The data come from the RNA Mapping Database (RMDB), library OK1LIB.
Chemical mapping of a 177-nucleotide RNA with 2A3 and DMS.
For 2A3 the reverse transcriptase was SuperScript II with manganese.
The 2A3 profile rests on 2,102 reads.
The DMS profile rests on 3,762 reads.
2A3 is a SHAPE reagent: it acylates the 2'-hydroxyl of flexible nucleotides of all four kinds.
Conditions: 150 mM KOAc, 10 mM MgCl2 and 150 mM bicine (pH 8.5), 24 C.
[RMDB]
RNA sequence: GGGAACGACUCGAGUAGAGUCGAAAAGCUGGUCCGGCUUGGCCCCAGCGAACACUUGACGAACGGUUAGUCCCGUCUUGUGGAUUAGGACGUUCUAGGUCCGGUCUGGCCCCUAGUUCGUCCGAAAGGCAAGCAUGUGCUUCGGCACGUGCUUGCCAAAAGAAACAACAACAACAAC
Reactivity to 2A3 in 0.01 (KOAc 150mM, MgCl2 10mM, bicine 150mM(pH8.5), 24C), signal-to-noise 4, nucleotides 027 to 126: g000c000u030g040g050u090c010c030g070g040c080u060u270g170g010c000c010c000c000a040g050c010g010a020a000c020a000c010u000u020g040a000c010g030a190a010c030g080g010u130u190a040g110u250c030c030c000g000u000c000u020u050g010u030g020g080a100u050u150a070g010g000a010c000g000u000u000c000u000a000g000g030u000c050c010g050g230u100c140u160g100g010c090c010c000c000u020a000g010u000u000c010g000u000c000c030g020a030a000a010
Reactivity to DMS in 0.01 (KOAc 150mM, MgCl2 10mM, bicine 150mM(pH8.5), 24C), signal-to-noise 3, nucleotides 027 to 126: g000c000u000g000g020u020c070c110g030g000c040u030u010g020g030c120c080c010c140a100g000c110g000a120a110c050a030c030u000u000g000a040c020g010a170a100c150g000g040u040u030a120g000u000c120c110c010g030u000c060u000u040g000u000g000g020a130u000u000a120g000g000a000c020g000u000u000c000u020a010g010g000u010c050c000g010g000u000c200u070g010g000c180c160c000c020u000a010g010u000u000c000g000u010c000c000g000a010a070a130